[RMDB]
RNA sequence: GGGAACGACUCGAGUAGAGUCGAAAAGCACGUACACUGUAUAUUUUACUUUUUUGUUUAGUGUCUAUAUCUCACCACUAGAAUGUAAGAUCCAUGAAGUCAGGCUUUUUAUUUUAACUUUUAAAUGGAGGCUUAACAUACAUAUAGGAAAAUACCAUCCGUAUGAUAGUUUCGACUAUCAUACGGAAAAAGAAACAACAACAACAAC
Reactivity to 2A3 in 0.01 (KOAc 150mM, MgCl2 10mM, bicine 150mM(pH8.5), 24C), signal-to-noise 1, nucleotides 027 to 156: g000c030a000c080g020u100a000c060a010c070u030g060u110a190u010a090u190u030u070u060a040c030u090u230u120u020u110u140g040u010u060u110a020g000u000g000u000c020u010a170u010a030u180c020u010c040a010c000c000a040c040u000a000g040a190a040u070g030u010a030a030g000a030u000c000c000a030u020g060a000a060g010u020c040a000g000g040c060u110u020u010u120u090a110u060u090u030u140a110a040c000u000u160u030u300a060a100a060u040g000g000a010g100g000c000u120u010a100a000c020a040u050a080c030a000u200a030u120a110g050g000a030a000a020a030u050a020c090c000a010
Reactivity to DMS in 0.01 (KOAc 150mM, MgCl2 10mM, bicine 150mM(pH8.5), 24C), signal-to-noise 1, nucleotides 027 to 156: g060c020a060c140g000u020a080c030a100c030u000g030u020a110u000a050u000u000u010u010a030c020u010u000u000u000u000u000g000u000u000u000a050g040u000g010u000c010u000a130u010a090u010c020u000c050a120c090c030a150c030u010a060g020a050a050u000g010u000a020a050g020a070u000c060c050a120u000g000a100a090g060u000c050a030g050g040c050u020u000u000u000u000a020u020u030u010u010a030a140c040u010u010u000u010a040a070a060u010g000g000a020g000g010c020u000u000a050a050c030a120u010a100c020a050u010a130u010a110g020g000a070a080a040a120u000a060c020c050a100
An RNA of 207 nucleotides, treated with 2A3 and DMS and read out base by base. The reactions ran in a buffer of 150 mM KOAc, 10 mM MgCl2 and 150 mM bicine (pH 8.5), at 24 C. The DMS profile rests on 1,983 reads. The data come from the RNA Mapping Database (RMDB), library OK3TST. For DMS the reverse transcriptase was MarathonRT.